[RMDB]
RNA sequence: GGGAACGACUCGAGUAGAGUCGAAAAAGAAACUGUCACUGGGAGCGGUGCGGCCAAGGAGGAAGCAGUGCUGCCAGGCUCUGCUCCAGGGCACAGCUGGCUGGCGGCUGCCCUGUCCGCAGCAAAGUAGUCUAGGUCUGUUCGCAGACCUAGACUAAAAAGAAACAACAACAACAAC
Reactivity to DMS in 0.01 (KOAc 150mM, MgCl2 10mM, bicine 150mM(pH8.5), 24C), signal-to-noise 1, nucleotides 027 to 126: a080g010a060a080a050c090u000g000u000c030a160c060u000g030g000g030a090g000c080g020g000u000g020c040g000g010c050c040a060a110g000g020a190g020g010a080a030g000c000a010g010u000g020c010u000g010c050c030a080g010g000c040u000c130u000g020c020u000c070c130a090g000g010g000c030a020c140a030g000c030u000g020g010c040u020g000g020c040g030g030c000u000g000c010c020c020u000g000u020c010c060g000c050a060g020c110a090a100a160g000